[RMDB]
RNA sequence: GGGAACGACUCGAGUAGAGUCGAAAAGAAAGAAAGAAAGACAAGACUUGCGAGACUGGUUUUCUCUUUGGUCUUCCAGAUUUUUAUUGGAAUUCUGAGAUCAUUGUGAAAACUAAUCUCGCUGAAACCUAAAGUGAAACUUCGGUUUCACUUUAGGAAAAGAAACAACAACAACAAC
Reactivity to 2A3 in 0.01 (KOAc 150mM, MgCl2 10mM, bicine 150mM(pH8.5), 24C), signal-to-noise 9, nucleotides 027 to 126: g070a010a060a000g110a040a060a010g100a060a070a000g090a020c090a070a040g040a120c070u080u110g000c000g000a000g000a000c020u030g000g000u000u000u000u000c020u000c000u000u000u010g010g000u000c010u120u020c060c000a000g000a010u020u040u040u080u160a300u220u300g080g060a030a030u120u010c010u020g010a010g000a010u010c000a000u000u020g010u010g020a000a010a000a000c000u000a000a010u000c000u000c000g000c000u000g000a020a020a000
Reactivity to DMS in 0.01 (KOAc 150mM, MgCl2 10mM, bicine 150mM(pH8.5), 24C), signal-to-noise 4, nucleotides 027 to 126: g010a080a060a110g010a070a080a080g000a100a050a100g010a080c090a150a140g000a090c140u020u010g000c000g000a010g000a010c080u000g000g010u000u000u000u000c000u000c000u000u000u000g000g010u000c000u000u020c260c050a010g000a010u000u000u010u000u050a150u060u040g020g010a020a020u000u010c010u000g020a020g000a000u000c000a000u010u000g000u010g000a000a020a000a010c000u000a000a040u000c000u000c010g010c000u000g010a070a090a130

The data come from the RNA Mapping Database (RMDB), libraries RFM100 and RFMREP. Structure probing data (2A3 and DMS) for a 177-nucleotide construct. For DMS the reverse transcriptase was MarathonRT.